Annotation
The data come from the RNA Mapping Database (RMDB), library VIROID. Structure probing data (DMS and 2A3) for a 177-nucleotide construct. 2A3 adducts were read by reverse transcription with SuperScript II with manganese. DMS adducts were read by reverse transcription with MarathonRT.
RNA sequence: GGGAACGACUCGAGUAGAGUCGAAAAAAACCAGUGUGGUACGGUAUGGCGAGGCUUGCCUCGGAGCCAAGCGGGAGGGCUCCCGGGGCGCCGCACGGGCGCAGUGCUGCGCGAGACUCUAUGCCCGCCUUAUAUAGGGGUUCGCCCCUAUAUAAGGAAAAGAAACAACAACAACAAC
Reactivity to DMS in 0.01 (KOAc 150mM, MgCl2 10mM, bicine 150mM(pH8.5), 24C), signal-to-noise 3, nucleotides 027 to 126: a050a030a090c040c020a110g030u000g010u000g000g010u010a050c070g020g010u010a060u010g010g010c030g010a120g010g010c050u010u000g050c000c000u010c050g000g000a040g010c000c010a090a110g010c040g000g000g010a080g010g000g010c010u000c060c020c030g010g010g000g000c020g010c010c050g020c070a040c060g010g000g000c050g030c040a060g010u010g000c070u010g000c030g020c020g000a090g000a070c110u000c060u000a070u000g000c000c000c000g010
Reactivity to 2A3 in 0.01 (KOAc 150mM, MgCl2 10mM, bicine 150mM(pH8.5), 24C), signal-to-noise 3, nucleotides 027 to 126: a000a000a000c040c010a060g020u050g020u030g050g050u050a030c040g020g070u120a090u130g090g000c050g060a060g010g090c100u110u160g000c020c000u000c010g000g000a000g000c000c010a060a030g060c020g010g040g000a030g040g000g010c000u050c050c060c010g000g000g000g000c020g000c000c010g030c020a030c010g070g050g020c050g000c050a020g030u050g120c050u020g010c010g000c010g000a030g020a020c040u050c020u100a050u180g010c010c010c010g000